[RMDB]
RNA sequence: GGGAACGACUCGAGUAGAGUCGAAAAAUUAGCUGUUAUCUCUGACUGAAUUUGAUUUCUACAAGCAGCUGAGUCAGGUAACUUUGCAGCGUUUGAGGGGGUUUUUUACAGGAAAUGAAAUCGGCUCUGAUCAACAAAUGUUCGCAUUUGUUGAUCAAAAAGAAACAACAACAACAAC
Reactivity to DMS in 0.01 (KOAc 150mM, MgCl2 10mM, bicine 150mM(pH8.5), 24C), signal-to-noise 2, nucleotides 027 to 126: a070u010u010a140g030c000u000g020u000u000a110u000c050u010c050u000g000a140c040u000g000a060a080u020u000u000g020a110u000u000u000c090u010a170c200a050a120g030c050a050g020c030u000g010a040g000u000c100a000g020g010u010a030a060c110u000u010u000g020c010a070g000c060g000u010u000u000g020a210g010g000g000g010g010u010u000u000u000u020u000a100c090a040g010g000a050a030a090u000g010a030a070a100u000c020g020g040c060u010c150